[RMDB]
RNA sequence: GGGAACGACUCGAGUAGAGUCGAAAAUGAUAAAAUAACUUCACUCCUAAGCUGUUAGACAAGGCACACAGCUAUAUAAUGUGUUUUGAAUACUCUCAUACUAUGUCAGGUGGUAUCUAAUAAGGGAAUUAAAUGAUCGGUUCGCCGAUCAUUUAAUAAAAGAAACAACAACAACAAC
Reactivity to DMS in 0.01 (KOAc 150mM, MgCl2 10mM, bicine 150mM(pH8.5), 24C), signal-to-noise 3, nucleotides 027 to 126: u000g010a050u010a060a060a120a170u000a040a170c150u020u010c030a040c130u000c010c010u000a110a090g000c030u000g000u000u010a070g000a140c050a040a040g020g010c010a020c070a040c080a050g010c090u000a040u010a070u010a080a080u000g010u000g020u000u000u010u000g010a170a080u010a030c130u000c050u000c070a070u000a050c050u010a040u000g010u000c140a060g000g020u000g010g000u000a020u000c080u010a040a080u010a070a070g000g000g000a140
Reactivity to 2A3 in 0.01 (KOAc 150mM, MgCl2 10mM, bicine 150mM(pH8.5), 24C), signal-to-noise 2, nucleotides 027 to 126: u040g030a000u120a130a090a030a080u200a100a040c030u030u040c010a010c020u000c010c040u030a050a050g010c040u000g040u080u040a030g040a070c030a080a010g010g000c030a010c000a000c010a050g020c100u040a040u020a020u020a300a100u090g030u000g030u050u020u000u090g030a070a020u050a060c010u010c000u000c030a010u050a090c010u120a040u210g080u110c040a010g130g000u000g000g010u040a020u000c020u030a040a120u140a130a160g030g020g030a030
Background: Structure probing data (DMS and 2A3) for a 177-nucleotide construct. DMS adducts were read by reverse transcription with MarathonRT. For DMS, 2,364 sequencing reads were counted. Values cover nucleotides 27 to 126. The 2A3 profile rests on 1,470 reads.